[RMDB]
RNA sequence: GGGAACGACUCGAGUAGAGUCGAAAAACGGCACCUUUGAUGUGACUAUGCCCCGGGAUCGAGCUGGCACGUUUACGCCGCGGAUGCUGCCUAAAGGCACCCGCCGUCUGACGGAGCUUGAUGACAUGAUCAUCUCCCUGUACGCCGGUGGGAUGAAUCCUCAGCAUAAUUUCGAUUAUGCUGAGGAAAAAGAAACAACAACAACAAC
Reactivity to DMS in 0.01 (KOAc 150mM, MgCl2 10mM, bicine 150mM(pH8.5), 24C), signal-to-noise 2, nucleotides 027 to 156: a090c040g000g000c000a080c060c030u020u000u000g030a080u010g040u000g000a040c040u000a070u000g000c000c000c040c010g000g000g030a100u000c030g000a060g050c020u010g020g000c050a100c030g010u000u010u000a070c050g020c040c030g030c030g050g000a050u000g010c000u000g030c090c060u010a130a130a270g020g010c010a090c010c000c000g030c010c010g000u000c050u010g010a080c050g020g010a110g030c050u010u000g000a080u000g020a090c050a120u010g010a250u000c010a010u000c100u000c010c000c000u000g000u000a050c080g020c080c000g020g040u000g010g050g010a040u010g000a100a230
Reactivity to 2A3 in 0.01 (KOAc 150mM, MgCl2 10mM, bicine 150mM(pH8.5), 24C), signal-to-noise 3, nucleotides 027 to 156: a010c040g010g000c030a080c000c040u100u110u290g220a230u130g070u030g080a090c050u080a110u210g050c010c000c000c010g030g020g010a040u030c030g040a010g010c020u050g080g000c120a030c190g000u010u060u060a050c080g050c080c040g010c030g000g000a010u070g020c050u040g000c000c040u180a240a120a060g010g000c000a020c010c000c000g000c020c000g010u000c070u030g020a030c010g000g020a010g010c030u020u000g010a000u030g030a040c030a120u170g040a140u050c000a000u060c040u040c020c030c030u020g020u070a050c100g100c150c000g050g000u070g030g000g010a000u080g020a010a060